[RMDB]
RNA sequence: GGGAACGACUCGAGUAGAGUCGAAAAUUAUGUCCGGGGCUGCACACGUCCUACAAUGGAACAUACAGACGGCCGCGAACCCGCGAGGGUAAGCUAAUCCGAAAAAGUGUUCCUUAGUUCGGAUUGCAGACUAUAACCUAUUCGUAGGUUAUAGUCUAAAAGAAACAACAACAACAAC
Reactivity to 2A3 in 0.01 (KOAc 150mM, MgCl2 10mM, bicine 150mM(pH8.5), 24C), signal-to-noise 9, nucleotides 027 to 126: u140u060a080u180g050u010c010c010g020g000g010g000c010u050g020c050a040c020a020c110g040u020c000c000u030a030c060a040a090u110g010g000a030a010c000a020u110a030c010a030g180a060c020g010g010c030c020g010c010g020a080a120c000c000c000g010c030g020a100g010g010g000u000a010a020g000c010u040a040a030u020c010c000g070a060a000a000a030a020g050u040g010u040u030c000c000u020u030a080g010u040u050c050g000g020a030u030u110g030c030
Reactivity to DMS in 0.01 (KOAc 150mM, MgCl2 10mM, bicine 150mM(pH8.5), 24C), signal-to-noise 9, nucleotides 027 to 126: u020u020a050u020g010u010c020c010g010g010g020g010c060u000g000c090a060c210a120c110g010u000c010c020u010a060c140a100a090u010g000g010a030a020c020a050u010a090c170a130g010a230c050g000g010c300c200g010c010g010a200a070c010c000c000g000c220g000a160g000g000g000u000a030a270g010c010u000a070a050u000c000c000g010a020a060a070a110a160g010u010g000u000u000c010c000u000u020a110g010u000u020c060g000g000a050u000u000g010c200